[RMDB]
RNA sequence: GGGAACGACUCGAGUAGAGUCGAAAAGAGGGUUGGUUCGCCAACCCUCCAUUAAAAUGAGCGGUAAAUAAUUAGCAGGCGUUACCGCUGAACGCCUGCAUAGACUCAGUCUGUUCGCAGACUGAAAUACUCUUCAUUAGUUCGCUAAUGAAGAGUAAAAAGAAACAACAACAACAAC
Reactivity to DMS in 0.01 (KOAc 150mM, MgCl2 10mM, bicine 150mM(pH8.5), 24C), signal-to-noise 4, nucleotides 027 to 126: g010a010g000g010g020u000u000g010g020u000u020c220g020c010c010a020a000c000c000c000u000c000c010a030u010u010a050a050a110a100u010g000a030g000c010g000g010u000a050a080a080u010a040a120u000u010a110g020c010a010g010g010c010g000u000u000a040c010c030g000c020u000g010a030a010c000g000c000c000u000g020c010a060u020a050g020a130c180u000c000a000g000u000c000u000g000u000u010c180g020c000a000g000a000c000u000g000a010a070a130
Reactivity to 2A3 in 0.01 (KOAc 150mM, MgCl2 10mM, bicine 150mM(pH8.5), 24C), signal-to-noise 4, nucleotides 027 to 126: g010a010g010g010g010u020u010g020g020u060u110c160g040c060c000a010a000c000c000c000u020c000c000a000u030u030a020a030a010a080u130g040a020g020c040g050g070u070a050a100a100u110a090a210u220u210a070g000c010a000g000g000c000g020u010u030a060c010c020g000c000u000g000a010a000c000g000c000c000u000g010c000a010u050a000g030a020c030u000c030a000g000u000c000u010g040u060u090c210g000c080a000g000a010c000u000g000a000a010a000

Structure probing data (DMS and 2A3) for a 177-nucleotide construct. The reactions ran in a buffer of 150 mM KOAc, 10 mM MgCl2 and 150 mM bicine (pH 8.5), at 24 C. The DMS profile rests on 7,091 reads. Reactivities are given for positions 27 through 126.